Chemical mapping of a 177-nucleotide RNA with 2A3 and DMS. It was measured as part of the RMDB library OK2TST. The reactions ran in a buffer of 150 mM KOAc, 10 mM MgCl2 and 150 mM bicine (pH 8.5), at 24 C. Values cover nucleotides 27 to 126.
[RMDB]
RNA sequence: GGGAACGACUCGAGUAGAGUCGAAAACAGCGAGUCUACCAGGGCGCGAAGAUCGGCGACGAGUUCAGGCGAACAAUCUUUCGCCUUCUUCCCUUUCUCGCUGCGCUGGACGGAAUAGGCUAUGGCGACGUGAGAUCGUCUUCGGACGAUCUCACGUAAAAGAAACAACAACAACAAC
Reactivity to 2A3 in 0.01 (KOAc 150mM, MgCl2 10mM, bicine 150mM(pH8.5), 24C), signal-to-noise 1, nucleotides 027 to 126: c000a000g070c010g020a010g000u000c000u010a000c010c000a010g080g090g020c050g010c000g050a090a060g010a020u010c000g000g080c150g020a050c060g060a050g010u110u210c140a030g000g000c000g000a000a000c100a110a260u070c090u060u060u020c000g000c010c000u060u100c010u010u000c000c000c010u010u010u000c010u000c000g030c080u130g000c050g070c020u020g010g010a030c020g000g080a060a080u070a040g030g040c020u040a030u160g090g050c020g020
Reactivity to DMS in 0.01 (KOAc 150mM, MgCl2 10mM, bicine 150mM(pH8.5), 24C), signal-to-noise 2, nucleotides 027 to 126: c050a200g060c000g010a050g000u010c030u000a010c020c020a030g060g030g070c010g000c020g010a060a050g000a020u010c040g010g030c230g020a030c190g000a010g010u000u000c190a060g000g000c010g000a010a010c300a120a160u030c210u000u000u020c000g000c000c010u000u010c020u000u000c000c000c000u000u000u000c000u000c010g000c030u010g080c020g010c000u000g000g010a080c180g010g010a120a200u000a040g010g000c000u000a080u000g000g000c020g000